[RMDB]
RNA sequence: GGGAACGACUCGAGUAGAGUCGAAAAGAUGAAAAUAACCAACAAUGUGAUCUUGCUUGCGGAGGCAAACUUUGCACAGUAUAAAAUCUGCGAGUAGUGCUAUUGUUGGAAAGAAUACUGUGCAAAAACGGUCCCUAGUAUUCGUACUAGGGACCGUAAAAGAAACAACAACAACAAC
Reactivity to DMS in 0.01 (KOAc 150mM, MgCl2 10mM, bicine 150mM(pH8.5), 24C), signal-to-noise 1, nucleotides 027 to 126: g060a120u000g020a060a030a120a090u100a220a170c040c000a010a000c000a030a040u000g000u000g000a130u060c000u000u000g050c000u000u000g040c000g000g000a070g020g010c300a200a070a100c130u040u000u000g000c000a000c000a000g000u000a060u010a010a050a080a120u000c000u020g000c000g020a010g010u010a010g040u000g030c010u010a000u000u000g000u020u000g000g010a000a130a050g040a160a000u000a020c000u010g020u000g000c040a000a000a000a120
Reactivity to 2A3 in 0.01 (KOAc 150mM, MgCl2 10mM, bicine 150mM(pH8.5), 24C), signal-to-noise 3, nucleotides 027 to 126: g200a040u250g140a010a020a050a090u240a110a070c020c000a000a000c000a010a010u210g090u060g300a300u070c000u030u010g000c000u010u000g010c000g010g010a000g000g120c070a030a000a080c060u000u000u000g000c010a000c000a000g020u020a010u090a170a080a050a190u010c010u000g010c000g010a010g000u030a000g100u060g080c010u000a010u010u030g000u010u010g000g010a000a010a010g040a000a030u030a030c000u000g000u000g010c000a000a020a000a020
Source information:
Source: RMDB library OK1LIB, as collected in RNAgym. Structure probing data (DMS and 2A3) for a 177-nucleotide construct. The DMS profile rests on 1,622 reads.